RNA sequence: GGGAACGACUCGAGUAGAGUCGAAAAAAAUAACCUAACUGAAGAUUGUGUCUCAUGGAAUCUUGAUGAAACAGCUGUUCAGGAUGUUAUUCUAGCUUCCACGGAUGCCAUAGCUGUGUCUGAGUUAUUAAAAAUAAACAGAUACACUAUUGCUUCAUGACGAGAAAUUGUUCGCAAUUUCUCGUCAAAAAGAAACAACAACAACAAC
Reactivity to 2A3 in 0.01 (KOAc 150mM, MgCl2 10mM, bicine 150mM(pH8.5), 24C), signal-to-noise 1, nucleotides 027 to 156: a000a000a010u150a070a100c030c050u080a070a020c100u100g060a050a020g060a280u140u010g000u000g030u070c010u010c060a020u100g070g000a030a020u020c010u040u090g010a020u040g000a120a090a060c010a010g040c000u050g080u300u180c060a020g030g030a120u000g040u080u020a020u000u040c020u010a020g010c040u030u070c030c010a040c060g140g000a020u000g000c010c010a000u000a030g010c120u010g000u000g000u040c000u000g150a220g270u000u000a000u020u080a050a140a000a000a000u030a000a000a000c000a000g010a010u000a000c000a000c000u020a020u000u030g010c000u020u030c020a020